[RMDB]
RNA sequence: GGGAACGACUCGAGUAGAGUCGAAAAUACAUGGAUUCUGUUUUGACUGAUUUAUAAGUGUAUGUGUCAUUCUGGCCUUUCUCUUUACUGAGCCAUGGUUGAGUAUGUGACCAAUGGCACAGUGCACCUUCCUAGUGUCGUUCGCGACACUAGGAAGAAAAGAAACAACAACAACAAC
Reactivity to DMS in 0.01 (KOAc 150mM, MgCl2 10mM, bicine 150mM(pH8.5), 24C), signal-to-noise 3, nucleotides 027 to 126: u010a070c060a060u000g000g000a080u010u000c050u000g010u010u000u000u000g000a100c080u010g000a120u010u000u000a070u030a110a170g020u010g020u000a030u010g010u020g010u000c020a050u000u000c130u010g030g020c030c040u010u000u000c040u000c050u010u020u010a050c060u000g030a090g010c060c040a020u010g000g010u000u000g000a120g010u030a080u010g010u000g010a070c010c010a030a050u000g000g000c000a030c000a020g000u010g020c140a060c100
Reactivity to 2A3 in 0.01 (KOAc 150mM, MgCl2 10mM, bicine 150mM(pH8.5), 24C), signal-to-noise 2, nucleotides 027 to 126: u070a010c070a090u070g090g020a040u080u030c000u110g180u120u070u110u060g080a060c040u040g070a140u120u170u080a230u110a180a050g010u030g020u070a060u060g100u020g020u030c030a040u120u080c060u030g030g000c000c040u060u120u050c030u030c000u030u080u140a050c040u010g020a000g020c020c030a040u060g070g000u000u000g050a100g150u240a190u300g220u160g040a010c010c060a050a160u020g030g000c000a000c010a030g080u030g010c000a040c050